Notes:
Chemical mapping of a 177-nucleotide RNA with DMS and 2A3. The DMS profile rests on 714 reads. For DMS the reverse transcriptase was MarathonRT. The RNA was probed in 150 mM KOAc, 10 mM MgCl2 and 150 mM bicine (pH 8.5) at 24 C.
RNA sequence: GGGAACGACUCGAGUAGAGUCGAAAAGAUAUGGACCUAGAACUACGCUGUAACUUUCGACGAUCUCGCAUUUCUGUCGGAAACGACAGAAAUGCGAGGGAGAAAGAGCAGCGCUAGGUCCUAAGUCGACUCAGACUUAGUUCGCUAAGUCUGAGUCAAAAGAAACAACAACAACAAC
Reactivity to DMS in 0.01 (KOAc 150mM, MgCl2 10mM, bicine 150mM(pH8.5), 24C), signal-to-noise 1, nucleotides 027 to 126: g000a200u000a300u000g020g020a010c000c000u020a040g000a180a130c250u010a300c050g000c030u020g000u000a120a240c000u000u000u000c000g000a040c290g010a000u000c020u000c000g000c000a010u000u000u000c000u010g000u000c000g010g000a040a100a180c050g010a040c000a060g000a000a000a000u010g000c000g050a000g000g000g000a040g000a020a010a000g000a300g000c010a010g000c010g000c010u010a000g010g020u000c000c000u000a000a080g010u000c110
Reactivity to 2A3 in 0.01 (KOAc 150mM, MgCl2 10mM, bicine 150mM(pH8.5), 24C), signal-to-noise 1, nucleotides 027 to 126: g060a020u130a060u270g020g000a000c000c000u010a020g040a140a170c300u300a050c250g000c010u010g190u300a300a270c010u170u050u030c110g300a300c000g000a300u000c020u000c000g000c010a030u010u000u000c040u000g010u000c010g000g050a090a100a100c040g000a010c000a010g050a000a010a020u000g000c010g000a000g000g000g000a000g000a020a030a000g000a000g090c040a000g030c020g000c000u000a000g000g000u000c000c000u020a000a020g020u030c070